[RMDB]
RNA sequence: GGGAACGACUCGAGUAGAGUCGAAAAGGUUUCACCUUCGGGUGAAACCAAAUAAUAGUCGCUAGAAAACGAUCAAAACUACCGACUUACAUAACGAUCGAAAAAGAAUGGUGUUCGCACCAUUCAACACGGUCUAUAACUUCGGUUAUAGACCGUGAAAAGAAACAACAACAACAAC
Reactivity to DMS in 0.01 (KOAc 150mM, MgCl2 10mM, bicine 150mM(pH8.5), 24C), signal-to-noise 1, nucleotides 027 to 126: g000g010u010u000u000c000a000c000c000u000u010c150g090g000g050u000g000a010a000a020c000c000a000a020a030u030a060a180u000a010g020u000c010g000c220u000a060g000a040a040a050a060c010g010a060u010c000a070a080a160a080c010u000a010c120c000g000a020c000u000u000a030c180a120u000a070a120c270g000a000u010c000g000a080a020a020a100a080g010a000a000u000g020g020u000g010u000u050c150g000c020a030c000c000a010u000u000c000a090a120
Reactivity to 2A3 in 0.01 (KOAc 150mM, MgCl2 10mM, bicine 150mM(pH8.5), 24C), signal-to-noise 1, nucleotides 027 to 126: g010g010u000u000u000c010a020c000c000u020u040c210g110g000g010u000g000a000a020a000c000c000a000a000a010u010a000a010u060a010g000u000c010g000c030u020a010g050a070a130a060a110c040g010a020u010c010a000a060a020a070c000u010a030c000c030g020a000c010u060u080a060c060a130u200a180a090c050g020a010u040c010g040a060a000a030a050a000g010a000a010u000g000g000u000g040u030u050c140g010c070a000c000c000a020u000u000c000a010a010
Source: RMDB library M2PK50, as collected in RNAgym. Structure probing data (DMS and 2A3) for a 177-nucleotide construct. Conditions: 150 mM KOAc, 10 mM MgCl2 and 150 mM bicine (pH 8.5), 24 C. For 2A3 the reverse transcriptase was SuperScript II with manganese. DMS adducts were read by reverse transcription with MarathonRT. The DMS profile rests on 1,005 reads. The 2A3 profile rests on 2,240 reads.